[RMDB]
RNA sequence: GGGAACGACUCGAGUAGAGUCGAAAAGACGAAUACAGCACCUGUACGAUAUUGGUGCGUGGGACGGCAGAGGGCAGCGCGGACGUGCAGGAGGUGUUCGAGCGUUGAGCAUCCGGGGCGAAAGCCUAAAUAGCUAUACGUUCGCGUAUAGCUAUUUAAAAGAAACAACAACAACAAC
Reactivity to 2A3 in 0.01 (KOAc 150mM, MgCl2 10mM, bicine 150mM(pH8.5), 24C), signal-to-noise 9, nucleotides 027 to 126: g080a020c050g020a050a020u120a070c050a050g050c020a050c030c000u050g050u150a050c080g060a130u070a130u270u200g070g000u090g010c000g000u060g010g030g020a060c060g020g000c030a040g050a100g080g030g020c020a020g010c040g000c020g070g030a050c030g010u050g010c020a010g040g030a030g040g020u030g020u040u030c020g020a040g030c060g030u030u110g030a020g010c010a040u010c020c030g030g000g000g000c020g030a080a020a010g000c000c000u010
Reactivity to DMS in 0.01 (KOAc 150mM, MgCl2 10mM, bicine 150mM(pH8.5), 24C), signal-to-noise 9, nucleotides 027 to 126: g010a130c040g000a110a060u010a070c060a130g020c060a050c010c000u000g010u020a080c150g020a130u030a090u020u010g000g010u010g020c020g030u020g000g000g000a110c090g000g010c080a070g000a110g010g000g000c040a120g000c050g020c030g010g000a090c070g010u010g000c040a060g000g000a070g010g010u000g000u010u000c020g010a110g010c090g010u030u020g000a100g010c070a070u010c040c040g010g000g000g000c010g000a110a080a140g010c020c010u000

Chemical mapping of a 177-nucleotide RNA with 2A3 and DMS. The reactions ran in a buffer of 150 mM KOAc, 10 mM MgCl2 and 150 mM bicine (pH 8.5), at 24 C. For DMS the reverse transcriptase was MarathonRT. The 2A3 profile rests on 18,510 reads. Source: RMDB library OK1LIB, as collected in RNAgym.